[RMDB]
RNA sequence: GGGAACGACUCGAGUAGAGUCGAAAAGGGGGUGUACAGGUUUCGACGGGGAUAGGAAACUAAAGGUUGCAUGCCGAGGUCCGGGCUGGCCUCGUUAAAAAGCCCGGGGCGAAUUACACGCCGAUAAUUACGACUACGCCGUAGCAGCUUAAUACCCGAUAUCACCAGUGUUCGCACUGGUGAUAUCAAAAGAAACAACAACAACAAC
Reactivity to 2A3 in 0.01 (KOAc 150mM, MgCl2 10mM, bicine 150mM(pH8.5), 24C), signal-to-noise 1, nucleotides 027 to 156: g030g010g010g000g010u040g000u020a060c050a020g020g010u050u070u110c060g060a080c040g070g000g030g000a030u100a060g000g050a040a190a030c050u070a080a080a090g010g000u030u020g000c020a010u090g050c020c020g010a000g000g020u000c000c010g000g000g000c000u010g030g000c000c000u000c000g050u060u020a030a000a000a000a000g000c010c000c000g010g010g010g020c010g010a120a020u120u140a110c060a000c060g000c000c000g000a020u150a030a070u110u050a020c020g050a020c110u080a050c150g030c020c000g040u020a010g020c000a010g000c000u040u110a050a000u070a170c050c020c030